[RMDB]
This 177-nucleotide RNA was probed chemically with DMS. The DMS profile rests on 691 reads. Values cover nucleotides 27 to 126. It was measured as part of the RMDB library OK2TRN.
RNA sequence: GGGAACGACUCGAGUAGAGUCGAAAAUACCGACCAGAUUUGGUAAAUAGCCCGCCAACGGAUUGGAAUGCCAUGAUCGCUGAGGCGGCCCGGCUGCACGCGGCGGGCGAGCCUAGCUGGAUCGCGGUCAGUAGUGUGGCUUCGGCCACACUACUGAAAAAGAAACAACAACAACAAC
Reactivity to DMS in 0.01 (KOAc 150mM, MgCl2 10mM, bicine 150mM(pH8.5), 24C), signal-to-noise 1, nucleotides 027 to 126: u000a120c050c010g000a130c060c030a060g000a070u000u000u000g000g030u000a040a100a090u000a300g010c000c010c000g000c030c010a060a140c130g000g000a170u030u000g010g020a110a230u000g000c020c020a140u010g000a040u000c030g050c030u000g040a170g010g010c000g020g000c070c100c300g020g030c000u000g010c090a100c000g010c300g020g000c000g030g020g010c000g040a000g030c030c060u000a040g030c000u000g000g000a080u000c140g010c050g010g010